[RMDB]
Record summary: Chemical mapping of a 177-nucleotide RNA with 2A3 and DMS. Reactivities are given for positions 27 through 126. The 2A3 profile rests on 4,029 reads. In probing experiments dimethyl sulfate is read out at A N1 and C N3, which are open when not base-paired. DMS adducts were read by reverse transcription with MarathonRT. For 2A3 the reverse transcriptase was SuperScript II with manganese.
RNA sequence: GGGAACGACUCGAGUAGAGUCGAAAAAGGUAUCUAUCGAAACCAUUCUGAUGAUCAAUACAGUAUUUUUGUCGCAUUCUUAUUACGGUACGUGCAAACAUUAGUUUCCAAGCGGAAGAAACUGUGUGUGUAUUCCAGUAUUCGUACUGGAAUACACAAAAGAAACAACAACAACAAC
Reactivity to 2A3 in 0.01 (KOAc 150mM, MgCl2 10mM, bicine 150mM(pH8.5), 24C), signal-to-noise 4, nucleotides 027 to 126: a000g080g010u070a040u030c040u030a110u130c070g010a090a020a000c020c010a050u090u040c020u070g050a080u030g020a030u090c040a040a040u090a130c030a020g040u030a220u030u060u010u040u040g120u060c010g010c030a040u100u020c050u090u160a170u120u150a040c070g030g000u040a030c010g070u070g060c040a040a070a030c020a080u070u190a030g030u010u040u000c010c030a050a030g060c060g060g030a050a030g040a010a080a000c020u020g000u020g010u010
Reactivity to DMS in 0.01 (KOAc 150mM, MgCl2 10mM, bicine 150mM(pH8.5), 24C), signal-to-noise 2, nucleotides 027 to 126: a090g000g010u000a030u010c040u000a140u020c070g000a060a100a070c030c040a140u000u010c030u000g000a110u010g000a110u000c110a130a080u000a040c040a050g000u000a040u000u000u000u000u000g000u000c010g010c040a070u010u000c040u020u010a050u000u000a060c080g000g000u010a020c070g030u000g000c130a040a030a060c070a060u010u010a040g010u010u010u000c010c030a120a100g010c140g000g000a130a050g000a010a070a050c020u000g000u000g020u000